[RMDB]
RNA sequence: GGGAACGACUCGAGUAGAGUCGAAAACUGUCUGCAACGGGCGGGGAAGAAGGUUAUCCAGCUGAACAGAAAGUCCUAUGAGACAGAGUACCCCAAGUGUAAGAACGAUGAUUGGGAUUUUGUCAUCCAUGCAAUCUGCAUUCGUGCAGAUUGCAUGAAAAGAAACAACAACAACAAC
Reactivity to DMS in 0.01 (KOAc 150mM, MgCl2 10mM, bicine 150mM(pH8.5), 24C), signal-to-noise 3, nucleotides 027 to 126: c010u000g010u000c020u010g040c080a010a110c280g000g000g030c030g010g000g050g030a170a040g010a100a090g000g000u030u010a050u000c040c060a030g000c010u010g010a090a090c050a100g010a100a120a060g020u010c000c020u000a210u000g000a050g000a010c020a010g020a080g000u000a140c070c010c010c120a050a040g010u030g010u030a070a100g000a090a110c090g010a070u020g020a040u000u000g000g000g020a140u020u020u000u010g010u010c060a030u000c040
Reactivity to 2A3 in 0.01 (KOAc 150mM, MgCl2 10mM, bicine 150mM(pH8.5), 24C), signal-to-noise 5, nucleotides 027 to 126: c020u010g020u000c010u180g130c020a050a050c100g010g000g000c040g020g030g030g030a050a040g030a040a040g120g010u120u060a080u180c010c000a010g040c020u080g050a100a040c010a080g110a170a020a000g020u030c000c010u050a110u190g060a030g000a010c020a000g010a010g060u120a140c030c000c000c010a060a100g040u060g050u300a130a100g060a160a040c090g010a030u080g020a040u020u090g130g040g030a050u060u070u070u100g040u010c010a030u000c000
Chemical mapping of a 177-nucleotide RNA with DMS and 2A3. Values cover nucleotides 27 to 126. The 2A3 profile rests on 3,561 reads. In probing experiments dimethyl sulfate is read out at A N1 and C N3, which are open when not base-paired.